This 177-nucleotide RNA was probed chemically with 2A3 and DMS. The reactions ran in a buffer of 150 mM KOAc, 10 mM MgCl2 and 150 mM bicine (pH 8.5), at 24 C. For DMS, 20,005 sequencing reads were counted.

[RMDB]
RNA sequence: GGGAACGACUCGAGUAGAGUCGAAAACUGCGUACUAGUGAUGUUUAAGACUGAGCCGGUUUACAGUAUCUUACGCAUACACUACAUGUAAACUAGACCGUAUUAGUUUUUUACAUUAGUAGUGCAAGGAUCUCUGAGUAUUCGUACUUGGAGAUCCAAAAGAAACAACAACAACAAC
Reactivity to 2A3 in 0.01 (KOAc 150mM, MgCl2 10mM, bicine 150mM(pH8.5), 24C), signal-to-noise 9, nucleotides 027 to 126: c020u050g020c030g020u010a010c010u020a020g170u000g020a010u000g010u000u020u020a010a010g010a000c000u010g020a010g040c020c020g020g020u010u020u050a050c050a020g020u040a050u050c080u110u130a060c090g040c060a030u080a060c100a030c060u220a060c050a120u130g030u090a030a050a040c020u020a040g040a050c020c030g030u050a110u070u050a020g010u000u000u000u000u010u020a000c000a000u000u010a020g210u000a000g000u020g010c010a020a040
Reactivity to DMS in 0.01 (KOAc 150mM, MgCl2 10mM, bicine 150mM(pH8.5), 24C), signal-to-noise 7, nucleotides 027 to 126: c020u010g000c150g000u010a020c030u000a020g010u000g000a020u000g010u000u000u010a020a010g000a010c010u000g010a060g010c040c020g000g000u000u000u000a040c090a070g010u000a050u020c090u020u040a120c210g010c230a080u010a100c090a100c100u020a030c220a100u020g000u010a030a060a060c190u010a050g010a030c030c040g000u010a040u000u000a010g000u000u000u010u000u000u000a000c010a000u000u000a030g000u000a010g010u000g000c030a090a080